[RMDB]
Overview
The record gives the reactivity of an RNA of 177 nucleotides to DMS. It was measured as part of the RMDB library TTRDES. DMS (dimethyl sulfate) methylates the pairing face of unpaired adenines and cytosines.
RNA sequence: GGGAACGACUCGAGUAGAGUCGAAAAGAUAUGGAUCGGAUGAUCGUUGAAACCUAUCAAGUCGGAAACGACUUGAGUAGGUGGAGAUCAAUCGAUCCUAAGUCAAACUGGUCGCUUCGGCGACCAGGUGGUACAGGGACUUCGGUCCCUGUACCACAAAAGAAACAACAACAACAAC
Reactivity to DMS in 0.01 (KOAc 150mM, MgCl2 10mM, bicine 150mM(pH8.5), 24C), signal-to-noise 1, nucleotides 027 to 126: g000a060u000a300u010g010g000a030u030c030g010g000a120u030g010a020u000c000g040u030u000g000a300a170a060c000c000u010a050u000c000a010a020g000u000c000g000g000a190a190a230c010g010a000c000u010u000g000a020g010u020a020g000g000u000g000g020a000g010a000u000c000a020a030u010c000g000a000u000c010c000u000a020a060g000u000c030a080a170a300c000u000g000g010u000c030g000c000u000u020c240g010g020c000g000a000c000c000a000g000